[RMDB]
RNA sequence: GGGAACGACUCGAGUAGAGUCGAAAAGAUAUGGAUGUAUAGACAUGCUGACCUCGGAAACGAGACCAGCAACAGCUAUCACAUCCUAAGUCAAACCCAGGAAUACGGUUCGCCGUAUUCCUGGGAACGGAUAUUUCGUGUUCGCACGAAAUAUCCGAAAAGAAACAACAACAACAAC
Reactivity to DMS in 0.01 (KOAc 150mM, MgCl2 10mM, bicine 150mM(pH8.5), 24C), signal-to-noise 1, nucleotides 027 to 126: g000a050u000a080u010g020g000a070u010g010u000a050u010a000g000a120c040a160u000g020c000u000g000a050c030c000u000c000g010g000a040a000a100c000g020a000g020a020c040c000a000g000c010a040a060c300a050g000c020u000a000u000c300a000c000a000u000c000c000u000a000a080g000u000c000a080a100a170c020c000c000a020g000g000a010a000u000a000c020g020g010u000u010c230g000c000c000g040u000a000u000u010c000c020u000g060g030g000a000a020
An RNA of 177 nucleotides, treated with DMS and read out base by base. Conditions: 150 mM KOAc, 10 mM MgCl2 and 150 mM bicine (pH 8.5), 24 C.